RNA sequence: GGGAACGACUCGAGUAGAGUCGAAAAGGAGCUUUGUGGCUUACCAGAGAUGCAGUCCCUCCCAGGAACCUGUUGGAGAGGCAGGACCUGCUGCUUUAGAGGAGUGCAGCUGAACCUCGGCCCUGCGUCAACUGUCUGUAUUCGUACAGACAGUUGAAAAAGAAACAACAACAACAAC
Reactivity to 2A3 in 0.01 (KOAc 150mM, MgCl2 10mM, bicine 150mM(pH8.5), 24C), signal-to-noise 3, nucleotides 027 to 126: g040g010a050g010c040u150u220u200g200u230g060g040c010u020u040a090c010c040a020g000a000g020a090u080g010c020a020g110u050c000c010c020u050c010c000c000a010g050g010a150a200c030c020u030g050u060u110g090g080a300g020a050g160g000c000a010g000g030a030c000c000u010g010c020u000g000c000u110u100u050a100g020a040g040g010a060g050u060g040c030a020g020c030u030g050a070a060c010c000u020c030g010g000c010c000c000u060g010c040g040
Reactivity to DMS in 0.01 (KOAc 150mM, MgCl2 10mM, bicine 150mM(pH8.5), 24C), signal-to-noise 5, nucleotides 027 to 126: g010g000a080g010c040u000u010u010g030u010g010g010c040u000u010a140c090c070a080g000a090g010a070u010g010c020a040g000u000c060c010c010u000c030c020c000a040g010g020a090a080c060c020u000g020u000u000g000g020a140g000a180g010g010c020a020g020g000a300c030c020u000g000c070u010g020c120u000u010u000a080g010a110g000g010a110g010u000g010c030a040g010c020u000g000a100a120c060c030u010c040g000g000c020c020c000u000g010c130g010

An RNA of 177 nucleotides, treated with 2A3 and DMS and read out base by base.